[RMDB]
RNA sequence: GGGAACGACUCGAGUAGAGUCGAAAAUGGGGUGAAUCGGCCUCACCGCCCUCGACGCGAGGACGGUCCGCCGUAGGGCAAACCUUCCGCGCCACACCGCCCGAACCCGACAGCUAACCCGGUAGGCGUCUAUAACGCUGUUCGCAGCGUUAUAGACAAAAGAAACAACAACAACAAC
Reactivity to 2A3 in 0.01 (KOAc 150mM, MgCl2 10mM, bicine 150mM(pH8.5), 24C), signal-to-noise 1, nucleotides 027 to 126: u080g020g000g010g000u050g060a050a040u010c020g000g000c040c010u030c130a020c010c000g000c000c020c020u020c020g300a300c120g070c190g110a000g000g000a010c020g000g000u020c010c000g000c000c010g020u050a000g000g080g000c040a090a080a210c010c000u120u090c020c040g110c010g010c000c010a110c030a000c020c020g010c000c010c000g010a000a000c010c000c000g040a070c020a010g030c040u040a060a040c000c000c020g070g080u060a040g010g070c080
Reactivity to DMS in 0.01 (KOAc 150mM, MgCl2 10mM, bicine 150mM(pH8.5), 24C), signal-to-noise 1, nucleotides 027 to 126: u010g000g010g040g040u010g000a060a160u000c050g020g020c030c080u010c200a020c010c000g000c000c000c000u000c000g000a130c230g000c040g040a010g000g000a010c050g000g000u010c120c300g010c000c000g000u000a070g000g000g020c020a120a190a020c100c060u000u000c050c080g000c070g040c000c080a120c140a060c050c050g010c000c020c000g000a080a100c020c020c010g010a110c150a040g000c170u000a030a120c030c010c000g010g000u010a080g020g000c280